[RMDB]
RNA sequence: GGGAACGACUCGAGUAGAGUCGAAAAAGAAUAGUCUGUCAAUUUAAAAAAACUCAAUAACUUCUGUAUGAUGUAUAUCUCCCUAAUUGGGGCGUUACGACGUUCUAGAAACGUAGUAUGAAGGCGCCCUUUACUGAACGUUCGCGUUCAGUAAAGGAAAAGAAACAACAACAACAAC
Reactivity to DMS in 0.01 (KOAc 150mM, MgCl2 10mM, bicine 150mM(pH8.5), 24C), signal-to-noise 4, nucleotides 027 to 126: a070g000a080a060u020a080g000u010c060u010g000u010c040a090a120u020u020u020a010a010a100a070a090a090a100c080u010c050a060a070u010a050a070c080u000u010c040u010g000u020a040u010g000a040u010g000u010a060u030a060u010c060u000c010c000c010u010a060a080u010u000g010g000g000g010c010g010u010u010a040c020g010a000c000g030u000u000c030u020a120g000a070a020a020c000g000u000a030g020u000a070u030g010a120a110g000g000c000g000c030
Reactivity to 2A3 in 0.01 (KOAc 150mM, MgCl2 10mM, bicine 150mM(pH8.5), 24C), signal-to-noise 3, nucleotides 027 to 126: a010g020a020a020u060a050g020u000c050u100g150u040c040a180a240u050u090u300a070a120a000a020a010a010a040c060u110c130a030a070u090a120a070c020u040u060c010u060g040u090a070u070g060a030u020g070u080a100u020a030u110c030u000c000c000c010u050a100a160u070u130g000g000g010g030c020g000u000u040a060c100g000a000c000g000u000u000c030u050a070g090a170a070a010c020g010u010a000g030u010a030u130g210a080a030g020g000c010g000c010